This 207-nucleotide RNA was probed chemically with 2A3. The reactions ran in a buffer of 150 mM KOAc, 10 mM MgCl2 and 150 mM bicine (pH 8.5), at 24 C. Source: RMDB library OK3TST, as collected in RNAgym.
[RMDB]
RNA sequence: GGGAACGACUCGAGUAGAGUCGAAAAGUCAUGCCUUCGGGCAUGACAGGUACCGAGAGGUACCAAAUAGCGUACAGGAGACUCAGACUGUACGCUAAAAAAGUGUGUGUUCAAUAAGGCCCAAUUGAACACACACUAAAAUGGGUCAAGAGUGUCACCAGGAUACUACGUUCGCGUAGUAUCCUGGAAAAGAAACAACAACAACAAC
Reactivity to 2A3 in 0.01 (KOAc 150mM, MgCl2 10mM, bicine 150mM(pH8.5), 24C), signal-to-noise 1, nucleotides 027 to 156: g010u000c000a000u000g010c010c000u070u120c270g060g000g000c000a000u000g010a000c000a010g010g000u000a000c000c010g040a060g000a010g030g010u000a000c010c010a020a020a020u050a000g000c010g010u000a000c000a000g010g020a050g030a050c010u040c050a000g010a090c000u000g000u000a000c000g010c000u010a000a000a000a000a000a060g010u010g000u010g000u010g000u000u000c000a000a000u060a120a120g070g000c060c070c020a000a010u000u020g000a000a000c000a000c000a000c000a000c010u020a010a000a000a020u030g020g040g000u020c040a040a050g120a020g120u050g070u090c030a040